This 207-nucleotide RNA was probed chemically with 2A3 and DMS. 2A3 adducts were read by reverse transcription with SuperScript II with manganese. Source: RMDB library OK3TST, as collected in RNAgym.
[RMDB]
RNA sequence: GGGAACGACUCGAGUAGAGUCGAAAAUGGUGAGGAGCGUGUAUUAGUCCAUUUUCACGCUGCUGAUAAAGACACCUGAAACUGGAAACAAGAAGAGAUUUAAUUGUUCCACAUAGCUGGGGAGGCCUCAGAAUCAUGGCCGGAGGUGGAAGGUACACUGCAUUUUAGUGUUCGCACUAAAAUGCAGAAAAGAAACAACAACAACAAC
Reactivity to 2A3 in 0.01 (KOAc 150mM, MgCl2 10mM, bicine 150mM(pH8.5), 24C), signal-to-noise 1, nucleotides 027 to 156: u140g000g000u020g030a020g020g030a030g020c020g020u010g030u050a120u020u030a070g040u010c070c010a060u040u010u000u050c000a000c020g000c010u060g070c000u010g070a040u050a180a040a000g070a050c030a010c040c020u040g090a040a030a000c050u030g000g000a100a050a000c040a010a090g090a040a010g010a020g020a180u090u140u200a110a080u140u150g000u060u060c000c000a020c000a070u140a020g000c020u060g000g000g020g010a050g010g000c010c000u040c020a010g100a050a080u150c050a050u120g020g000c010c010g000g000a000g030g050u000g010g030a040a010g020g000u010a040c020a000
Reactivity to DMS in 0.01 (KOAc 150mM, MgCl2 10mM, bicine 150mM(pH8.5), 24C), signal-to-noise 1, nucleotides 027 to 156: u010g030g000u000g010a100g020g000a150g050c060g050u000g010u000a050u000u000a110g000u000c030c060a030u000u010u000u000c010a100c060g030c040u000g040c060u000g000a230u000a130a130a090g000a110c020a060c010c000u000g060a080a040a010c080u000g060g020a050a060a070c030a140a040g030a110a040g040a110g040a100u020u010u000a060a170u000u000g030u000u000c060c040a040c050a120u000a150g000c070u000g010g020g000g020a130g080g020c000c020u000c050a060g010a190a160u000c080a040u000g020g000c020c020g030g010a060g000g010u000g040g010a060a030g020g010u000a020c080a130
Reactivities are given for positions 27 through 156. DMS adducts were read by reverse transcription with MarathonRT.